[RMDB]
RNA sequence: GGGAACGACUCGAGUAGAGUCGAAAAAUGGCAGCAAGAGGGGGGAUAACUAACAUAGUGGGUGUUGAAGAGUCCAGAUUAGUGCAGGCACUAAGCUCUCCCAAGCUUGAGAUCAAGAUGUCCAGGAUAUUUGAGGACUCAGGAUAUGCAAUGCUCAUAAUGACUCCAAAUUCGUUUGGAGUCAUUAAAAAGAAACAACAACAACAAC
Reactivity to 2A3 in 0.01 (KOAc 150mM, MgCl2 10mM, bicine 150mM(pH8.5), 24C), signal-to-noise 2, nucleotides 027 to 156: a010u010g050g000c000a000g030c020a040a070g010a060g040g040g030g000g050g000a000u060a080a030c040u010a000a020c050a030u070a050g030u090g030g010g020u050g000u070u050g050a080a020g000a010g070u000c040c020a020g010a230u020u020a020g050u020g060c110a100g030g040c010a000c030u000a000a000g010c000u000c040u040c000c050c000a000a000g000c020u060u060g070a020g010a100u090c020a050a000g020a050u060g020u040c000c000a020g090g100a020u040a070u210u060u130g030a080g000g010a020c000u000c030a020g020g010a020u050a010u080g050c000a000a050u080g030c020u010c060a050
Reactivity to DMS in 0.01 (KOAc 150mM, MgCl2 10mM, bicine 150mM(pH8.5), 24C), signal-to-noise 2, nucleotides 027 to 156: a100u010g000g030c040a050g020c060a040a110g000a150g030g060g010g000g000g000a080u000a070a130c070u010a060a090c050a120u000a110g030u000g020g020g030u000g010u000u000g000a100a130g000a100g050u000c000c010a150g000a120u000u000a060g040u000g010c070a090g030g030c040a050c060u000a050a130g000c030u000c050u000c040c010c030a060a080g020c060u000u000g010a070g000a120u010c060a090a100g000a070u000g020u000c000c010a150g010g000a140u000a080u000u010u010g010a140g030g010a080c050u000c010a110g000g010a100u000a060u000g000c040a070a130u010g010c020u000c020a240
Chemical mapping of a 207-nucleotide RNA with 2A3 and DMS. For DMS the reverse transcriptase was MarathonRT. The RNA was probed in 150 mM KOAc, 10 mM MgCl2 and 150 mM bicine (pH 8.5) at 24 C. 2A3 adducts were read by reverse transcription with SuperScript II with manganese.